[RMDB]
RNA sequence: GGGAACGACUCGAGUAGAGUCGAAAACGGUUCACCCGGAGUACGCGCAAACGCUACCGUAUGAGCGGAAUUCGGGGCGUGUACUAGAGGAGUUUGGCGCUUACCAUGAUCUCUCCGCGAACCGCGGGCGGGGACGUGGUUUCGACCAUGUCUCUGUAAAAGAAACAACAACAACAAC
Reactivity to DMS in 0.01 (KOAc 150mM, MgCl2 10mM, bicine 150mM(pH8.5), 24C), signal-to-noise 9, nucleotides 027 to 126: c060g010g010u010u010c050a200c030c020c020g010g000a040g000u000a020c010g000c010g010c020a040a080a080c020g000c300u020a200c050c020g010u000a110u040g010a140g010c010g000g000a070a110u020u010c020g000g000g000g010c010g010u010g010u000a010c020u000a070g010a110g000g000a060g010u010u010u000g000g010c090g010c100u010u010a050c020c020a040u010g000a090u010c030u000c020u010c010c010g010c070g000a070a080c110c050g010c030g000g000
Reactivity to 2A3 in 0.01 (KOAc 150mM, MgCl2 10mM, bicine 150mM(pH8.5), 24C), signal-to-noise 9, nucleotides 027 to 126: c020g020g010u060u050c030a070c020c000c010g010g030a010g010u030a000c010g030c000g000c030a110a180a060c030g020c090u080a120c030c010g040u090a180u300g140a110g050c010g000g050a050a110u120u060c010g000g000g030g000c000g000u030g010u010a020c020u030a030g060a070g090g020a070g020u040u090u090g060g000c050g000c050u040u070a060c010c010a050u070g070a120u050c020u000c000u000c020c000g000c020g030a120a070c050c040g000c010g010g020
Chemical mapping of a 177-nucleotide RNA with DMS and 2A3. For DMS, 212,568 sequencing reads were counted. The RNA was probed in 150 mM KOAc, 10 mM MgCl2 and 150 mM bicine (pH 8.5) at 24 C. For DMS the reverse transcriptase was MarathonRT. 2A3 adducts were read by reverse transcription with SuperScript II with manganese. Values cover nucleotides 27 to 126. Source: RMDB library OK1LIB, as collected in RNAgym.